[RMDB]
An RNA of 177 nucleotides, treated with 2A3 and DMS and read out base by base. For DMS the reverse transcriptase was MarathonRT. Reactivities are given for positions 27 through 126. 2A3 is a SHAPE reagent: it acylates the 2'-hydroxyl of flexible nucleotides of all four kinds. It was measured as part of the RMDB library M2PK50. The DMS profile rests on 1,000 reads.
RNA sequence: GGGAACGACUCGAGUAGAGUCGAAAAAAGGACUGGUUCGCCAGUCCUUAUUCAUUCGUACGCAACGAAGCGUAAGUGAUUACGCAAAUGACUAAAAGCGUAUACGAAAGGACUUCGGUCCUUUCAACCAACGGUGGUAGUUCGCUACCACCGUUGGAAAAGAAACAACAACAACAAC
Reactivity to 2A3 in 0.01 (KOAc 150mM, MgCl2 10mM, bicine 150mM(pH8.5), 24C), signal-to-noise 1, nucleotides 027 to 126: a030a000g020g000a010c010u020g000g010u020u030c130g040c050c010a000g000u010c000c000u000u000a000u000u000c000a010u010u010c000g030u000a010c010g020c030a110a040c150g120a080a060g010c010g000u000a010a000g030u050g130a100u010u010a000c000g000c010a000a040a160u170g050a080c050u150a020a000a060a060g000c020g000u000a020u020a040c070g000a000a000a000g000g000a010c010u020u140c300g090g030u000c000c020u000u000u000c000a000a010
Reactivity to DMS in 0.01 (KOAc 150mM, MgCl2 10mM, bicine 150mM(pH8.5), 24C), signal-to-noise 2, nucleotides 027 to 126: a020a000g020g000a000c000u010g000g000u000u000c190g010c000c000a000g000u000c000c000u010u000a000u010u000c040a150u000u010c130g000u000a010c010g000c020a080a170c170g000a120a130g010c000g040u000a000a000g030u010g020a180u000u000a000c000g000c020a110a070a070u010g010a100c160u000a040a010a090a100g000c000g000u000a020u000a060c220g000a000a020a010g010g000a000c000u000u020c160g020g000u000c000c000u000u000u000c000a110a150